Structure probing data (DMS and 2A3) for a 177-nucleotide construct. DMS adducts were read by reverse transcription with MarathonRT. For 2A3, 3,204 sequencing reads were counted. The reactions ran in a buffer of 150 mM KOAc, 10 mM MgCl2 and 150 mM bicine (pH 8.5), at 24 C. The DMS profile rests on 3,605 reads.

RNA sequence: GGGAACGACUCGAGUAGAGUCGAAAAGGAUAUUCGCGUGGAGAAGGUCCGUACCAGUGGCAGUCGCUGCAUGUUGGACCGCCGAUGCCGACCAUUCCAAGCGGUACCGACACAUCAGCAUUCGGUAAACAGGACAAAGGUUCGCCUUUGUCCUGUUAAAAGAAACAACAACAACAAC
Reactivity to DMS in 0.01 (KOAc 150mM, MgCl2 10mM, bicine 150mM(pH8.5), 24C), signal-to-noise 4, nucleotides 027 to 126: g020g020a090u000a050u010u000c030g030c090g020u000g010g010a090g010a100a100g000g020u000c020c110g050u000a080c070c040a150g020u000g010g010c060a090g020u000c070g020c040u010g020c210a100u020g030u010u010g010g000a040c040c010g030c030c030g000a080u000g000c050c090g000a070c080c040a120u000u000c020c050a090a120g000c030g000g010u010a030c010c000g020a060c090a070c090a080u000c090a070g020c060a180u000u010c060g030g000u010a120
Reactivity to 2A3 in 0.01 (KOAc 150mM, MgCl2 10mM, bicine 150mM(pH8.5), 24C), signal-to-noise 3, nucleotides 027 to 126: g030g000a060u030a040u140u200c040g020c070g070u120g040g060a110g040a200a100g060g000u040c020c010g000u010a050c020c010a080g070u120g070g000c060a070g060u150c060g060c120u050g120c060a120u180g070u080u080g090g020a010c000c000g000c000c010g000a020u060g010c000c030g020a060c030c000a060u120u020c010c000a010a000g000c000g000g040u050a160c000c000g020a010c030a010c010a110u150c040a020g060c030a070u110u040c030g000g000u070a080